RNA sequence: GGGAACGACUCGAGUAGAGUCGAAAAGAUAUGGACGGAAUGAAGCCGAAGAACCGAUGUAUAGGACAACUGGUCGGAAACGACCAGCUAAUCCUAUACAUCGGGGAGGCUUCACCGUCCUAAGUCAGUGUUCUUAUUGGUUCGCCAAUAAGAACACAAAAGAAACAACAACAACAAC
Reactivity to DMS in 0.01 (KOAc 150mM, MgCl2 10mM, bicine 150mM(pH8.5), 24C), signal-to-noise 2, nucleotides 027 to 126: g000a060u000a300u000g010g000a020c000g000g000a110a190u010g010a000a010g000c010c020g000a080a220g020a190a300c040c000g000a000u000g010u010a000u000a000g020g010a020c140a110a170c000u000g000g010u000c030g010g000a060a090a200c000g000a010c010c010a030g000c000u010a170a300u000c000c000u010a020u000a010c010a010u000c000g030g000g000g070a050g020g010c010u000u000c000a010c010c000g000u000c000c000u010a000a050g000u000c030a110
Reactivity to 2A3 in 0.01 (KOAc 150mM, MgCl2 10mM, bicine 150mM(pH8.5), 24C), signal-to-noise 1, nucleotides 027 to 126: g080a030u060a110u160g010g000a000c030g010g060a300a230u120g010a040a010g030c030c060g240a300a010g000a030a030c040c010g000a000u000g000u010a010u000a010g000g020a020c050a010a050c160u010g000g010u010c000g000g090a040a120a100c000g000a000c020c030a000g020c000u020a010a010u010c000c030u010a010u010a010c000a000u000c000g000g000g000g000a000g010g000c030u000u000c000a000c010c000g030u000c000c000u000a000a000g010u000c100a010